Record summary: Structure probing data (2A3 and DMS) for a 177-nucleotide construct. The 2A3 profile rests on 670 reads. Conditions: 150 mM KOAc, 10 mM MgCl2 and 150 mM bicine (pH 8.5), 24 C.
[RMDB]
RNA sequence: GGGAACGACUCGAGUAGAGUCGAAAAACGUGACGAGUUACGACUCGUCACGAGACGCGCAAGCAAAUGGGCUUGAUGUAAGGGCUAAACGGGGUCGAGUUGAGUGCCGUCGUACGCGACGGCACAAGAUAGGUGGAUUCUUCGGAAUCCACCUAUCAAAAGAAACAACAACAACAAC
Reactivity to 2A3 in 0.01 (KOAc 150mM, MgCl2 10mM, bicine 150mM(pH8.5), 24C), signal-to-noise 1, nucleotides 027 to 126: a000c010g000u000g000a000c000g000a000g000u000u090a120c200g030a020c020u000c000g000u000c000a000c000g010a000g020a040c110g030c000g030c010a050a000g040c000a000a000a300u280g000g080g000c000u060u050g030a020u060g050u100a050a070g000g030g000c030u040a080a050a060c110g000g000g000g060u060c040g000a020g090u090u110g080a000g000u000g000c020c000g000u000c000g000u010a060c300g000c000g090a000c020g000g000c000a000c010a000a000
Reactivity to DMS in 0.01 (KOAc 150mM, MgCl2 10mM, bicine 150mM(pH8.5), 24C), signal-to-noise 1, nucleotides 027 to 126: a140c000g000u000g000a010c000g000a000g020u020u000a290c100g000a090c000u000c000g060u010c000a000c000g000a020g000a070c080g020c000g020c000a070a030g000c070a080a040a110u040g000g000g000c000u000u060g000a120u010g000u000a060a050g000g000g030c040u000a040a020a040c120g020g030g000g010u000c030g030a120g000u010u000g040a020g000u000g030c040c030g010u010c020g030u020a120c150g000c010g050a010c000g020g070c030a000c030a030a080